Structure probing data (2A3 and DMS) for a 177-nucleotide construct. 2A3 adducts were read by reverse transcription with SuperScript II with manganese. The reactions ran in a buffer of 150 mM KOAc, 10 mM MgCl2 and 150 mM bicine (pH 8.5), at 24 C.
RNA sequence: GGGAACGACUCGAGUAGAGUCGAAAAUUUUUAUAACAGGGUCUUGUGCUGUCACUGGGCCUAGAGUGCAGUGGCAUGACGAUAGCUUUACUGCAGCCUCAACUUCCGAGGCUUAGGUGAUCAUUCCGUCUGUAAACAUAUUCGUAUGUUUACAGACAAAAGAAACAACAACAACAAC
Reactivity to 2A3 in 0.01 (KOAc 150mM, MgCl2 10mM, bicine 150mM(pH8.5), 24C), signal-to-noise 4, nucleotides 027 to 126: u020u020u030u060u060a220u050a090a080c020a070g140g040g000u030c050u100u120g060u090g080c030u030g010u070c010a000c010u010g010g060g000c000c010u050a070g010a030g040u080g070c010a000g000u000g020g000c000a020u060g040a020c030g010a030u070a070g030c030u050u080u100a040c030u020g030c030a010g000c000c000u010c000a060a090c080u200u060c080c060g000a010g000g000c000u010u020a010g000g000u020g030a060u080c040a100u100u090c060c030
Reactivity to DMS in 0.01 (KOAc 150mM, MgCl2 10mM, bicine 150mM(pH8.5), 24C), signal-to-noise 6, nucleotides 027 to 126: u000u010u010u010u000a090u020a150a140c080a100g020g010g010u000c060u000u000g010u010g020c090u000g010u000c010a020c020u000g000g010g010c010c020u000a070g000a100g030u000g010c000a020g010u010g010g000c010a020u010g010a060c070g010a080u010a090g000c060u000u010u000a040c020u000g000c240a070g010c020c010u010c010a110a100c250u010u010c200c110g000a010g010g010c000u000u000a070g010g010u000g010a070u010c080a140u010u000c070c080